The data come from the RNA Mapping Database (RMDB), library TTRDES. An RNA of 177 nucleotides, treated with DMS and 2A3 and read out base by base. 2A3 adducts were read by reverse transcription with SuperScript II with manganese.
RNA sequence: GGGAACGACUCGAGUAGAGUCGAAAAGAUAUGGAUGCAAAAGUCGUCGAUAAGAGGCGGUCGGAAACGACCGGCCUCUUUUGACGACGUCGCUGCAUCCUAAGUCAAACGCUGCUUCGGCAGCGAAUCUACAUUCAAAGUUCGCUUUGAAUGUAGAAAAAGAAACAACAACAACAAC
Reactivity to DMS in 0.01 (KOAc 150mM, MgCl2 10mM, bicine 150mM(pH8.5), 24C), signal-to-noise 6, nucleotides 027 to 126: g010a040u000a300u000g000g000a020u000g000c000a040a130a170a290g000u000c000g010u000c000g010a030u020a010a000g010a020g010g020c000g000g000u000c010g000g000a080a090a220c010g010a010c000c000g030g020c000c000u000c000u000u010u000u010g000a020c000g010a000c000g000u010c300g010c300u000g000c000a010u000c000c000u000a030a110g010u000c030a120a100a260c030g010c000u000g000c010u000u010c210g010g010c000a010g000c000g000a020a050
Reactivity to 2A3 in 0.01 (KOAc 150mM, MgCl2 10mM, bicine 150mM(pH8.5), 24C), signal-to-noise 3, nucleotides 027 to 126: g010a010u060a030u180g000g010a010u010g000c000a000a050a040a200g000u000c010g000u000c020g040a050u060a300a020g010a000g020g000c000g000g010u020c010g010g040a100a060a040c020g010a000c000c040g050g000c000c000u010c020u010u010u010u020g000a000c000g000a000c000g010u060c010g020c090u020g000c000a010u010c010c010u020a110a010g020u000c050a080a090a100c040g000c010u010g000c010u070u070c220g180g000c000a000g010c000g000a000a000